[RMDB]
Chemical mapping of a 177-nucleotide RNA with 2A3 and DMS. High 2A3 reactivity points to a flexible backbone, as in loops and unpaired stretches. The reactions ran in a buffer of 150 mM KOAc, 10 mM MgCl2 and 150 mM bicine (pH 8.5), at 24 C. For 2A3, 1,153 sequencing reads were counted. Source: RMDB library OK2TST, as collected in RNAgym. Values cover nucleotides 27 to 126.

RNA sequence: GGGAACGACUCGAGUAGAGUCGAAAAAUAUCGGCAACAGAACUCGUUUUGCGCCGCUAUCGAAGGCGAGUUGUAAACUAGCGGCAAGAUCCUGCACUGAUUAUGUCAGCAAUAUUGAACAUACUGAUCGGAUAUACCUGUUCGCAGGUAUAUCCGAAAAAGAAACAACAACAACAAC
Reactivity to 2A3 in 0.01 (KOAc 150mM, MgCl2 10mM, bicine 150mM(pH8.5), 24C), signal-to-noise 2, nucleotides 027 to 126: a000u130a060u040c010g010g020c020a080a010c010a100g110a050a020c040u020c090g030u000u020u080u190g030c030g000c000c030g000c050u040a070u160c100g120a080a000g060g010c000g030a040g030u120u100g170u240a050a080a110c000u000a010g000c000g000g000c020a010a020g060a010u070c030c040u070g020c070a040c100u050g010a050u090u120a060u210g050u010c020a000g000c040a080a020u130a120u160u160g070a040a030c020a010u100a060c060u010g020a080
Reactivity to DMS in 0.01 (KOAc 150mM, MgCl2 10mM, bicine 150mM(pH8.5), 24C), signal-to-noise 2, nucleotides 027 to 126: a090u000a040u000c000g000g050c020a060a100c130a090g010a100a060c030u000c100g030u000u000u000u000g030c190g020c010c000g000c060u000a130u010c190g000a050a020g000g000c010g000a050g000u000u000g000u000a080a110a070c110u000a030g010c030g020g030c020a130a150g000a070u000c030c020u000g010c130a080c070u000g000a060u000u000a050u000g000u000c000a020g030c110a050a120u010a120u020u000g000a030a150c100a040u010a050c130u000g000a090